Chemical mapping of a 177-nucleotide RNA with DMS and 2A3. The RNA was probed in 150 mM KOAc, 10 mM MgCl2 and 150 mM bicine (pH 8.5) at 24 C. DMS adducts were read by reverse transcription with MarathonRT. For 2A3, 3,086 sequencing reads were counted. Values are in units of 0.01, from 0 to 300, in steps of 10.
RNA sequence: GGGAACGACUCGAGUAGAGUCGAAAAUUGGUGGAAGCACAAGGAUUCCAAAGGUACAACAGCUUUUGAAGGACUACUUUGAUGGAAAGGAGCCAAACAAGGGGGUCAACCCUGAUGAAGCAGUUGCCACCGAGAAUACAUUCGUGUAUUCUCGGUGAAAAGAAACAACAACAACAAC
Reactivity to DMS in 0.01 (KOAc 150mM, MgCl2 10mM, bicine 150mM(pH8.5), 24C), signal-to-noise 4, nucleotides 027 to 126: u020u000g010g030u000g020g000a090a110g020c050a070c110a110a090g000g020a170u010u000c020c030a060a080a100g000g000u000a090c040a040a050c060a070g010c010u000u000u000u000g010a210a060g000g000a110c060u000a060c010u000u000u010g010a130u000g010g000a040a040a100g010g010a090g020c010c040a020a060a090c100a070a110g000g000g010g020g010u000c160a050a150c100c010c010u000g000a110u000g000a030a040g010c010a060g030u000u000g010c160
Reactivity to 2A3 in 0.01 (KOAc 150mM, MgCl2 10mM, bicine 150mM(pH8.5), 24C), signal-to-noise 3, nucleotides 027 to 126: u040u040g020g000u020g030g050a060a040g040c040a030c060a200a060g110g000a100u040u030c020c000a030a070a020g120g010u150a060c020a030a010c010a040g020c000u040u060u020u050g030a050a020g020g020a040c010u070a050c010u120u050u090g050a060u080g040g050a100a090a070g080g050a070g080c000c000a010a020a030c030a040a030g040g000g000g000g040u080c050a040a070c030c000c030u030g010a030u050g000a020a000g040c020a010g000u030u040g010c040